[RMDB]
RNA sequence: GGGAACGACUCGAGUAGAGUCGAAAAGAUAUGGAGGAAGGUAUACAUCAGCGACUGGUCGGAAACGACCAGAAUCGCGACGACGUAUACUUCCUCCUAAGUCAAAUCACGAACUUCGGUUCGUGAACACCACUAUAAUCUUCGGAUUAUAGUGGUGAAAAGAAACAACAACAACAAC
Reactivity to DMS in 0.01 (KOAc 150mM, MgCl2 10mM, bicine 150mM(pH8.5), 24C), signal-to-noise 8, nucleotides 027 to 126: g000a040u000a300u010g000g000a010g010g000a040a010g010g010u000a010u000a010c000a050u010c010a180g010c000g010a050c000u000g000g000u000c000g010g010a100a080a180c010g000a010c010c000a010g000a030a080u000c010g020c000g010a070c300g000a020c060g020u010a010u000a010c000u000u000c000c000u000c000c000u000a010a080g010u010c040a080a140a220u000c000a010c010g010a010a000c000u000u020c240g040g000u000u000c000g020u000g000a020a200
Reactivity to 2A3 in 0.01 (KOAc 150mM, MgCl2 10mM, bicine 150mM(pH8.5), 24C), signal-to-noise 7, nucleotides 027 to 126: g020a010u050a020u110g000g000a000g030g030a040a010g220g090u080a010u010a010c090a150u220c150a060g000c000g010a010c010u000g000g000u000c010g000g020a080a030a030c010g000a000c010c020a000g010a040a090u030c000g020c010g020a030c100g040a020c150g000u000a000u000a010c000u000u000c000c000u000c000c000u000a010a000g000u000c020a000a010a150u070c010a000c010g000a000a010c010u080u130c300g140g000u010u000c000g000u010g000a000a010
The record gives the reactivity of an RNA of 177 nucleotides to DMS and 2A3. The 2A3 profile rests on 35,415 reads. The RNA was probed in 150 mM KOAc, 10 mM MgCl2 and 150 mM bicine (pH 8.5) at 24 C. Reactivities are given for positions 27 through 126.